Source: RMDB library TTRDES, as collected in RNAgym. Structure probing data (DMS) for a 177-nucleotide construct. DMS adducts were read by reverse transcription with MarathonRT.
RNA sequence: GGGAACGACUCGAGUAGAGUCGAAAAAAAAAGAUAUGGAGGAGCCUACCCACCAUGUCUUGUCGUUUGACGUGCUUCGGAAACGAAGCACCGAGACAGGGCAUGAGGGCUCCUCCUAAGUCAAAAAGAGAAAUAUGUAGUUCGCUACAUAUUUCUCAAAAGAAACAACAACAACAAC
Reactivity to DMS in 0.01 (KOAc 150mM, MgCl2 10mM, bicine 150mM(pH8.5), 24C), signal-to-noise 2, nucleotides 027 to 126: a030a150a050a090a130g000a190u010a210u020g000g030a020g000g010a040g010c000c000u000a120c020c020c050a300c130c000a040u000g000u010c010u000u030g060u000c000g000u010u010u000g000a090c300g000u000g000c010u000u000c000g000g010a110a100a140c000g020a010a020g000c000a000c000c000g000a060g000a000c000a010g000g000g000c010a010u000g000a090g000g020g010c000u010c000c000u000c000c000u000a000a030g010u030c060a110a060a060a120a140